An RNA of 177 nucleotides, treated with DMS and 2A3 and read out base by base.
The RNA was probed in 150 mM KOAc, 10 mM MgCl2 and 150 mM bicine (pH 8.5) at 24 C.
2A3 adducts were read by reverse transcription with SuperScript II with manganese.
For DMS, 5,992 sequencing reads were counted.
It was measured as part of the RMDB library TTRDES.
[RMDB]
RNA sequence: GGGAACGACUCGAGUAGAGUCGAAAAGAUAUGGAGAUACGCCAGGGAGAUACCGGUCGGAAACGACCGCGUAUCUUUGAUCUGGGUAUCUCCUAAGUCAAAGCAUUGAGGGUUCGCCCUCAAUGCACCCUUAUAAAAAGUUCGCUUUUUAUAAGGGAAAAGAAACAACAACAACAAC
Reactivity to DMS in 0.01 (KOAc 150mM, MgCl2 10mM, bicine 150mM(pH8.5), 24C), signal-to-noise 4, nucleotides 027 to 126: g000a020u000a300u000g000g000a010g010a020u000a000c010g020c000c000a020g020g010g010a050g010a010u000a000c010c010g010g020u000c000g010g010a090a100a240c000g000a010c010c000g020c300g020u000a000u000c000u000u010u020g000a090u020c010u000g010g000g020u000a000u010c010u010c000c000u000a010a050g010u000c040a140a140a200g010c000a000u000u000g020a020g000g010g010u010u010c300g000c000c000c000u000c010a000a000u000g010c000a040
Reactivity to 2A3 in 0.01 (KOAc 150mM, MgCl2 10mM, bicine 150mM(pH8.5), 24C), signal-to-noise 3, nucleotides 027 to 126: g010a020u040a030u140g010g020a010g000a000u010a020c110g300c160c010a020g070g070g060a180g010a020u000a000c000c000g000g000u010c010g020g000a090a040a050c000g000a000c000c000g010c020g000u000a000u040c000u030u070u100g010a020u010c000u010g000g000g000u000a000u000c000u000c000c010u010a020a000g000u000c020a100a090a040g010c000a010u000u010g000a010g060g050g010u080u180c300g180c000c000c000u000c000a010a000u000g000c010a010